[RMDB]
RNA sequence: GGGAACGACUCGAGUAGAGUCGAAAAGUGCAUGCUUCGGCAUGCACAAAAAACCUUUGUGACUAGGGAGCUAUACACACGAGGCCCAUUGGGCUCCCCACCGUGUGUUAGCGAAGAACUAGUCACUCUGGUAAAAAUACGUGCUUCGGCACGUAAAUAUUACUGGACUGUUCGCAGUCCAGUAAUAAAAAGAAACAACAACAACAAC
Reactivity to DMS in 0.01 (KOAc 150mM, MgCl2 10mM, bicine 150mM(pH8.5), 24C), signal-to-noise 1, nucleotides 027 to 156: g010u000g000c000a020u010g000c000u020u020c260g110g020c130a000u010g130c000a010c000a000a010a090a050a080a010c000c000u000u000u000g010u000g030a040c080u040a010g000g000g000a240g010c010u000a050u000a030c000a010c010a000c010g000a260g040g010c020c000c010a200u080u000g110g000g000c010u000c180c010c000c040a300c130c010g000u000g080u000g020u000u000a000g000c030g000a080a060g000a110a180c040u000a000g010u000c020a000c000u000c040u000g010g020u000a000a090a050a060a140u000a040c000g000u010g030c000u030u000c300g040g040c030a000c010g000u010a000a020a160
Reactivity to 2A3 in 0.01 (KOAc 150mM, MgCl2 10mM, bicine 150mM(pH8.5), 24C), signal-to-noise 1, nucleotides 027 to 156: g000u000g000c000a010u040g020c010u100u140c280g060g020c070a010u010g020c010a000c060a020a000a000a000a020a000c000c000u000u000u020g000u000g010a000c010u000a000g000g000g030a010g040c000u040a030u090a300c000a000c000a000c020g000a010g020g020c020c000c050a240u170u300g000g000g000c000u080c060c050c020c000a000c000c010g000u000g000u010g000u010u000a000g010c000g050a050a000g000a000a000c010u000a000g000u000c000a000c000u000c000u000g000g000u060a030a150a000a000a000u070a000c000g000u000g000c020u010u100c130g130g000c000a000c000g000u000a000a010a020